[RMDB]
The record gives the reactivity of an RNA of 207 nucleotides to 2A3 and DMS. DMS adducts were read by reverse transcription with MarathonRT. The RNA was probed in 150 mM KOAc, 10 mM MgCl2 and 150 mM bicine (pH 8.5) at 24 C. For 2A3 the reverse transcriptase was SuperScript II with manganese. Source: RMDB library M2RFPK, as collected in RNAgym.
RNA sequence: GGGAACGACUCGAGUAGAGUCGAAAAGAGAGGGUAACCACCGGCGCGCGUCACUGAUAUAUCCACCGGAGGGUAAGGGGAGAAAAGGAUACAGCGCGACGAAGUUAGCACGCUGCCCCGUAAGGCUUGAAGAGUGUAGUGUUCGCACUACACUCAACGUAAUCUGACAGUUCGCUGUCAGAUUACGAAAAGAAACAACAACAACAAC
Reactivity to 2A3 in 0.01 (KOAc 150mM, MgCl2 10mM, bicine 150mM(pH8.5), 24C), signal-to-noise 4, nucleotides 027 to 156: g110a010g010a040g020g020g020u070a030a030c020c020a030c050c040g010g010c010g000c010g000c020g060u040c040a050c090u050g060a010u040a020u020a020u160c020c050a140c050c100g040g090a110g030g090g000u080a070a090g020g020g030g000a020g050a020a060a030a040g030g000a020u060a120c010a030g000c010g000c020g010a000c020g010a070a010g040u070u090a030g010c050a010c100g000c050u050g030c030c010c000c000g030u060a080a060g040g040c070u080u040g110a130a090g000a050g000u010g000u000a010g010u000g030u030u050c150g020c050a000c000u000a000c000a000c000u010c000a000a010
Reactivity to DMS in 0.01 (KOAc 150mM, MgCl2 10mM, bicine 150mM(pH8.5), 24C), signal-to-noise 1, nucleotides 027 to 156: g000a080g030a080g000g020g000u000a070a130c020c020a140c070c040g000g000c030g000c030g060c030g010u010c120a180c050u000g020a070u000a080u000a060u010c010c030a070c060c030g000g010a100g010g030g060u020a070a060g010g020g010g020a080g000a070a100a140a030g040g010a170u000a000c040a070g010c010g000c000g020a060c010g020a090a110g040u010u000a090g030c050a040c030g020c000u010g000c040c000c000c010g000u000a050a070g010g000c080u000u000g010a120a170g000a030g020u000g020u000a010g020u020g040u000u000c300g030c030a020c010u030a020c000a000c000u010c010a010a080